[RMDB]
RNA sequence: GGGAACGACUCGAGUAGAGUCGAAAACUGGGUAUUAAGUUGGGAAGGUCUUCAAUGAUAAUGUGAACUGAUAAUGACUUCUCUAUCGAGUAGAAAUCAUGAGAUGUGGAGACAGGAUGUUAACAAGACCAGAGGGAAAAGCCAUGGUCCUGGUAGACCAUUGUUCUUUGUUCGCAAAGAACAAUGGAAAAGAAACAACAACAACAAC
Reactivity to 2A3 in 0.01 (KOAc 150mM, MgCl2 10mM, bicine 150mM(pH8.5), 24C), signal-to-noise 4, nucleotides 027 to 156: c050u040g030g000g060u090a090u120u130a120a100g040u070u120g020g010g020a030a010g030g000u020c030u070u070c140a030a120u130g060a080u060a120a110u170g080u060g060a070a040c030u020g040a060u060a210a060u070g030a060c020u060u010c020u020c040u040a090u140c100g020a020g000u060a040g060a040a090a020u060c030a020u100g050a010g010a060u050g040u030g050g020a040g010a020c010a010g010g040a040u090g020u090u050a080a050c040a080a000g010a020c010c020a000g130a070g070g000g020a030a210a010a040g020c000c010a020u040g000g000u010c030c010u030g040g000u030a040g040a030
Reactivity to DMS in 0.01 (KOAc 150mM, MgCl2 10mM, bicine 150mM(pH8.5), 24C), signal-to-noise 2, nucleotides 027 to 156: c040u000g000g010g050u000a050u000u000a060a170g010u000u030g010g000g010a060a090g020g010u000c010u000u010c070a050a090u000g010a130u000a070a070u000g020u010g010a080a150c040u010g010a130u000a080a050u010g020a040c020u000u010c010u000c020u000a270u000c100g020a110g020u010a040g000a030a050a050u000c010a050u010g010a150g010a130u010g040u010g010g010a090g040a060c040a090g000g010a050u010g030u000u000a060a100c030a020a040g020a050c020c010a110g000a180g050g000g000a060a040a100a160g020c020c020a080u000g030g030u010c000c000u010g020g010u010a090g000a190